[RMDB]
RNA sequence: GGGAACGACUCGAGUAGAGUCGAAAACCGACGUUUCGACGUCGGAAAAAAGCGUACUACAGGCGAUGAAAUAUGUGCACCGAUAAGUCCCAAAUAGGACUUUUGACGGUGCCCAUAUGGAGCCUGUAUCGCAAAAAUCUGAGUUUCGACUCAGAAAAGAAUGCUUAAGAUUCGUCUUAAGCAUUCUAAAAGAAACAACAACAACAAC
Reactivity to 2A3 in 0.01 (KOAc 150mM, MgCl2 10mM, bicine 150mM(pH8.5), 24C), signal-to-noise 3, nucleotides 027 to 156: c000c000g000a000c000g000u020u080u220c180g100a030c000g000u000c000g000g000a110a000a000a000a000a000g030c040g030u070a060c060u000a000c010a000g000g010c010g210a300u050g010a060a030a000u000a000u010g010u000g000c000a000c010c020g010a030u010a060a000g000u010c000c020c050a100a210a110u250a090g010g000a010c000u080u070u060u170g180a120c020g000g000u000g000c010c000c010a000u020a000u000g000g000a000g000c000c040u010g000u010a000u020c000g030c000a020a000a000a170a000u000c010u010g000a000g030u070u100u150c160g050a040c010u000c000a000g020a000a020a010
Reactivity to DMS in 0.01 (KOAc 150mM, MgCl2 10mM, bicine 150mM(pH8.5), 24C), signal-to-noise 2, nucleotides 027 to 156: c000c000g000a010c020g010u000u000u000c200g050a120c000g010u000c010g020g030a000a000a060a110a070a120g010c020g020u010a070c110u000a030c020a020g000g020c000g020a150u000g010a150a020a030u000a000u000g000u010g000c000a020c000c000g030a160u000a020a010g000u000c000c000c010a060a160a160u010a070g010g000a030c000u000u000u000u000g000a160c070g010g020u000g010c000c010c010a010u010a000u000g000g000a290g000c000c000u000g000u000a010u000c010g000c010a020a060a120a120a150u000c000u000g010a030g020u000u000u010c280g010a100c000u010c000a020g000a000a040a120